Chemical mapping of a 177-nucleotide RNA with DMS. For DMS, 1,092 sequencing reads were counted. The reactions ran in a buffer of 150 mM KOAc, 10 mM MgCl2 and 150 mM bicine (pH 8.5), at 24 C.

RNA sequence: GGGAACGACUCGAGUAGAGUCGAAAACAGUCACAGCCAGGGUUGUCUGGACAGUCACAGCUGGGGACGCCUGGGCAGUCACAGCUAGACCUGGGGAAGUCUGAGGUUGGGAGCUUCCCUGUGUCAGGACUCACUCAACAUUCGUGUUGAGUGAGUCAAAAGAAACAACAACAACAAC
Reactivity to DMS in 0.01 (KOAc 150mM, MgCl2 10mM, bicine 150mM(pH8.5), 24C), signal-to-noise 1, nucleotides 027 to 126: c110a180g000u000c060a040c050a050g020c020c010a010g000g000g000u000u020g020u020c000u020g030g000a040c050a010g030u010c090a190c210a040g000c020u010g020g030g000g000a010c030g010c000c070u000g020g000g000c020a020g000u000c030a060c050a040g000c020u000a060g020a170c190c020u010g000g010g020g020a020a000g020u020c020u000g010a120g020g020u000u010g010g020g000a130g000c030u000u000c000c000c000u000g000u020g000u020c020a090g000